[RMDB]
RNA sequence: GGGAACGACUCGAGUAGAGUCGAAAAUGAGGUAGUUGUCAACAGCCUCCUGGUCGUUGCAGUAGAAUAUACCCAACCGCAGAUUGAGGAUGAGUUUGCGGAUCAUGGUAUGCACGUUCGCACGCUGUAUCUCCGUCGAGAUCACGUCGCUGAUACCGGUCAGGAUAAGAUUCGUCUUAUCCUGACCAAAAGAAACAACAACAACAAC
Reactivity to DMS in 0.01 (KOAc 150mM, MgCl2 10mM, bicine 150mM(pH8.5), 24C), signal-to-noise 2, nucleotides 027 to 156: u010g010a090g020g040u000a090g030u000u010g000u010c040a040a040c040a130g030c000c010u000c030c070u000g030g000u010c030g030u010u010g000c000a080g040u020a100g010a090a170u000a090u010a060c020c010c030a150a260c010c010g010c030a030g010a040u000u010g020a130g070g030a180u000g000a030g010u000u000u010g010c000g000g010a030u000c090a130u020g020g040u000a010u010g010c110a090c070g040u000u000c110g010c070a050c020g050c100u000g000u000a050u000c010u010c000c120g010u000c100g030a090g000a010u010c030a070c050g010u000c080g050c010u000g010a090u000a090c000c080
Reactivity to 2A3 in 0.01 (KOAc 150mM, MgCl2 10mM, bicine 150mM(pH8.5), 24C), signal-to-noise 4, nucleotides 027 to 156: u180g010a060g020g020u090a060g040u150u080g100u100c080a030a030c030a120g020c020c000u030c000c040u060g010g010u070c020g090u090u040g030c040a030g010u120a040g120a140a030u080a010u030a110c000c000c010a040a050c010c010g010c010a010g030a040u010u110g060a100g230g010a070u120g040a030g010u020u020u010g000c020g000g040a040u110c030a040u070g030g000u010a030u030g100c040a000c110g080u110u070c040g000c020a000c020g070c130u020g050u130a020u000c000u000c030c070g230u220c240g030a000g000a010u010c000a000c000g030u000c070g000c090u070g010a020u010a080c040c020

Chemical mapping of a 207-nucleotide RNA with DMS and 2A3. DMS (dimethyl sulfate) methylates the pairing face of unpaired adenines and cytosines. 2A3 adducts were read by reverse transcription with SuperScript II with manganese. The reactions ran in a buffer of 150 mM KOAc, 10 mM MgCl2 and 150 mM bicine (pH 8.5), at 24 C. Reactivities are given for positions 27 through 156. The DMS profile rests on 3,334 reads. The 2A3 profile rests on 2,075 reads. Source: RMDB library OK3TST, as collected in RNAgym.